[RMDB]
RNA sequence: GGGAACGACUCGAGUAGAGUCGAAAAGCAUCAAGCGGUGUAUGAGGAUAGUUCCAGAUGUUAACGAUACCUUUCCGACACUGGCAAACAACUUGUCAACAAUUUUUUCCUCCGGACAAUCGGCAUGGCUCGCUUAGAUAUUCGUAUCUAAGCGAGCAAAAGAAACAACAACAACAAC
Reactivity to DMS in 0.01 (KOAc 150mM, MgCl2 10mM, bicine 150mM(pH8.5), 24C), signal-to-noise 2, nucleotides 027 to 126: g020c060a070u010c090a090a150g010c060g000g010u020g000u000a100u010g010a070g010g000a120u000a060g040u000u020c030c020a060g030a040u020g000u000u010a060a070c130g000a110u000a050c100c050u000u000u020c050c020g000a100c110a060c090u020g000g020c130a000a030a120c120a100a100c190u000u010g000u000c030a060a060c140a050a010u000u000u000u000u020u000c000c000u000c050c040g000g000a050c110a050a080u010c050g000g010c200a080u000g010
Reactivity to 2A3 in 0.01 (KOAc 150mM, MgCl2 10mM, bicine 150mM(pH8.5), 24C), signal-to-noise 2, nucleotides 027 to 126: g040c000a050u040c080a080a020g060c030g090g000u040g000u030a140u070g020a040g000g020a070u010a080g060u020u060c040c010a000g020a150u080g080u110u040a060a010c030g010a020u100a130c040c000u000u030u020c020c010g010a000c010a010c030u030g020g000c040a000a120a040c000a020a060c030u060u030g000u000c020a010a030c040a100a130u000u010u040u000u100u090c000c010u020c000c000g060g030a050c030a040a110u050c040g070g000c050a070u080g100

This 177-nucleotide RNA was probed chemically with DMS and 2A3. The 2A3 profile rests on 1,638 reads. Conditions: 150 mM KOAc, 10 mM MgCl2 and 150 mM bicine (pH 8.5), 24 C. High DMS reactivity at an A or C suggests that its Watson-Crick edge is free. 2A3 adducts were read by reverse transcription with SuperScript II with manganese. DMS adducts were read by reverse transcription with MarathonRT.